[RMDB]
RNA sequence: GGGAACGACUCGAGUAGAGUCGAAAAUCCAUCUUCGGAUGGACCUUUCGGGGUCGCUACGGUCUCCGUUUGACGGACAUGAGCUGAAGCCUCCACGGCUCAACAGCCCGAGGAGACCUAGCGACGGAGGCACCCUGGAAUCACAAUUCGUUGUGAACAUUAGUAGGCCAUUCGUGGCCUACUAAUGAAAAGAAACAACAACAACAAC
Reactivity to DMS in 0.01 (KOAc 150mM, MgCl2 10mM, bicine 150mM(pH8.5), 24C), signal-to-noise 1, nucleotides 027 to 156: u000c000c000a000u000c060u000u000c300g020g020a050u000g000g000a010c080c050u000u010u030c000g030g020g020g000u000c000g050c010u020a060c060g010g000u000c000u020c000c020g020u000u000u000g000a300c060g010g000a080c070a300u000g000a110g000c020u010g000a040a150g060c020c000u000c000c060a300c040g050g000c020u010c000a040a040c020a180g020c040c000c000g040a050g000g000a030g030a060c000c010u000a000g080c000g010a040c000g040g000a020g020g000c010a040c050c000c020u020g000g000a040a100u000c040a030c020a000a130u000u020c110g010u050u000g010u000g000a130a300
Reactivity to 2A3 in 0.01 (KOAc 150mM, MgCl2 10mM, bicine 150mM(pH8.5), 24C), signal-to-noise 3, nucleotides 027 to 156: u020c000c000a010u000c000u040u070c270g140g000a020u000g010g010a040c000c010u110u030u120c080g000g010g000g000u010c000g000c010u030a040c280g010g010u000c000u000c000c000g090u120u210u260g090a050c030g000g010a000c030a150u130g000a000g010c010u030g010a100a000g000c000c000u010c010c000a030c000g010g000c000u000c000a010a070c040a050g110c000c010c010g060a090g050g000a000g000a000c060c000u000a000g000c010g020a000c000g010g000a000g000g000c000a030c020c000c020u060g110g140a130a110u100c030a020c060a140a140u220u190c280g050u140u030g010u040g050a060a000